The record gives the reactivity of an RNA of 177 nucleotides to DMS and 2A3. For 2A3, 1,666 sequencing reads were counted. DMS adducts were read by reverse transcription with MarathonRT. Source: RMDB library OK2TST, as collected in RNAgym.

[RMDB]
RNA sequence: GGGAACGACUCGAGUAGAGUCGAAAAAAUUAUUCUCUUCAUCAGCUUACGUUGAGUGGGAUGCAUAUAUAGUUCCUGAAUCUGUAAGUCUGUUAGUUAUAGGUUACUGUAAAUGUGGCUGGUGCAGGAACGUCAUGCAAUUCGUUGCAUGACGUUCAAAAGAAACAACAACAACAAC
Reactivity to DMS in 0.01 (KOAc 150mM, MgCl2 10mM, bicine 150mM(pH8.5), 24C), signal-to-noise 3, nucleotides 027 to 126: a080a090u020u010a090u000u000c010u000c000u000u000c020a030u000c010a030g020c010u010u000a040c040g030u010u000g000a110g030u020g000g010g010a020u000g000c200a080u030a120u010a150u010a170g000u000u010c000c010u010g010a030a030u000c010u000g020u000a010a020g000u000c140u000g020u000u020a100g010u000u000a040u000a010g000g010u000u000a100c090u000g000u000a050a040a030u000g010u000g000g020c020u000g000g030u000g000c100a060g010
Reactivity to 2A3 in 0.01 (KOAc 150mM, MgCl2 10mM, bicine 150mM(pH8.5), 24C), signal-to-noise 2, nucleotides 027 to 126: a000a000u290u220a040u080u020c030u000c000u030u030c000a050u000c010a000g000c020u180u150a000c030g060u090u080g020a040g070u120g010g020g000a020u090g040c140a020u160a030u050a040u050a270g060u020u030c000c000u030g020a020a080u000c010u000g010u050a020a010g120u040c090u120g180u200u110a060g040u070u060a030u010a070g020g040u040u020a040c000u040g060u200a030a030a040u070g010u030g000g000c000u030g010g000u010g000c000a020g000